This 177-nucleotide RNA was probed chemically with DMS and 2A3. Values cover nucleotides 27 to 126. For DMS the reverse transcriptase was MarathonRT. For DMS, 2,126 sequencing reads were counted.
[RMDB]
RNA sequence: GGGAACGACUCGAGUAGAGUCGAAAAUAGCCGAUUGAGGCGAAUUCAGUGAUCCUAUGCUGCCGAGAAAAGCCUCUAGCGAGCUUUCACACGGCCCGUACCCCAAACCGACACAGGUGGUCAGGUAUGAGCCAAUGAGUUUCGACUCAUUGGCUCAAAAAGAAACAACAACAACAAC
Reactivity to DMS in 0.01 (KOAc 150mM, MgCl2 10mM, bicine 150mM(pH8.5), 24C), signal-to-noise 2, nucleotides 027 to 126: u040a130g000c000c010g000a200u000u040g000a160g000g000c000g000a040a070u030u040c020a160g050u040g040a080u010c100c040u000a100u030g020c040u040g000c030c040g000a180g000a110a070a120a110g000c070c010u000c020u010a100g060c130g000a110g010c000u000u000u000c020a040c120a130c100g000g000c030c020c020g020u000a160c010c130c000c090a060a070a070c050c000g000a110c090a040c040a070g010g020u000g020g000u030c060a070g000g040u000a100
Reactivity to 2A3 in 0.01 (KOAc 150mM, MgCl2 10mM, bicine 150mM(pH8.5), 24C), signal-to-noise 2, nucleotides 027 to 126: u050a000g000c000c000g110a140u070u220g060a090g010g010c010g020a000a050u120u030c070a050g050u050g160a120u130c010c010u110a090u210g010c040u040g010c020c050g100a060g020a120a110a000a000g000c010c000u030c010u010a000g020c000g150a030g060c000u000u000u170c060a080c010a010c010g050g000c000c000c000g070u080a070c000c000c020c000a030a040a030c000c010g080a070c030a050c020a090g000g080u100g050g040u010c020a050g020g000u070a070